This 177-nucleotide RNA was probed chemically with DMS and 2A3.
RNA sequence: GGGAACGACUCGAGUAGAGUCGAAAAUUGGAUACGAUGCUUUGGAUUGAGGAACGCGUAGUAAGCUUUGAGCGGAUUCGAAAGGAUCUCCUUACUAUGGAUGUUGGUGAAAUAACUUUAAGCGACCUUAUUUACCGCAUUUCGAUGCGGUAAAUAAAAAAGAAACAACAACAACAAC
Reactivity to DMS in 0.01 (KOAc 150mM, MgCl2 10mM, bicine 150mM(pH8.5), 24C), signal-to-noise 6, nucleotides 027 to 126: u020u020g010g010a090u020a070c110g020a070u020g000c020u000u010u000g000g010a090u010u010g000a140g010g010a050a050c050g010c030g010u000a010g020u000a020a020g000c220u020u020u010g010a120g030c200g000g000a020u000u000c000g010a080a100a170g010g000a020u000c010u000c080c000u000u000a010c010u010a030u000g010g010a090u010g010u000u000g010g010u000g000a070a050a050u010a050a070c080u000u010u000a040a080g010c070g000a090c120c060
Reactivity to 2A3 in 0.01 (KOAc 150mM, MgCl2 10mM, bicine 150mM(pH8.5), 24C), signal-to-noise 5, nucleotides 027 to 126: u080u070g060g010a040u070a100c060g020a050u060g010c030u050u030u080g050g040a080u050u070g050a050g040g020a060a000c010g010c000g050u010a010g010u010a000a010g030c090u130u180u280g080a040g010c140g040g020a020u000u010c010g060a060a030a020g020g000a010u020c010u000c000c000u000u000a020c010u020a000u060g100g030a060u040g060u070u020g030g090u070g040a060a040a030u120a030a030c030u050u090u090a040a010g030c030g010a020c000c020
Source information:
DMS adducts were read by reverse transcription with MarathonRT.